[RMDB]
RNA sequence: GGGAACGACUCGAGUAGAGUCGAAAACAUCUAAGGAAGGCAGCAGGCGCGCAAAUUACCUAUCCCUGACUCAGGGAGGUAGUAAACAGAAAUAAUGGCACAUGUUUUAAACAUGUGAUCGGAACGAGUUGCAAUGACGUUUCGACGUCAUUGCAACAAAAGAAACAACAACAACAAC
Reactivity to 2A3 in 0.01 (KOAc 150mM, MgCl2 10mM, bicine 150mM(pH8.5), 24C), signal-to-noise 2, nucleotides 027 to 126: c000a000u020c010u040a020a080g020g010a010a010g080g000c010a010g000c000a010g080g000c020g000c000g000c010a060a070a040u150u000a000c000c010u020a110u150c030c010c000u220g100a300c050u020c110a000g010g000g000a000g000g010u000a000g000u030a000a170a060c070a080g180a030a010a030u240a020a150u190g110g000c000a020c000a020u050g010u010u000u030u110a200a240a010c000a000u000g000u030g110a030u090c020g020g020a010a010c070g090a080
Reactivity to DMS in 0.01 (KOAc 150mM, MgCl2 10mM, bicine 150mM(pH8.5), 24C), signal-to-noise 2, nucleotides 027 to 126: c040a090u010c160u000a140a090g000g030a040a030g000g030c030a040g030c100a010g040g000c050g010c000g020c110a000a090a060u040u000a010c010c000u000a190u010c000c000c000u030g010a130c150u030c100a070g000g000g000a000g010g000u000a030g000u000a070a030a180c120a070g010a080a100a130u040a020a020u000g120g000c000a050c010a000u020g000u000u020u080u020a110a110a030c020a000u010g030u020g010a050u020c000g000g030a120a050c150g010a200
The data come from the RNA Mapping Database (RMDB), libraries RFM100 and RFMREP. An RNA of 177 nucleotides, treated with 2A3 and DMS and read out base by base. For 2A3 the reverse transcriptase was SuperScript II with manganese. DMS adducts were read by reverse transcription with MarathonRT. Values are in units of 0.01, from 0 to 300, in steps of 10. Conditions: 150 mM KOAc, 10 mM MgCl2 and 150 mM bicine (pH 8.5), 24 C. Reactivities are given for positions 27 through 126.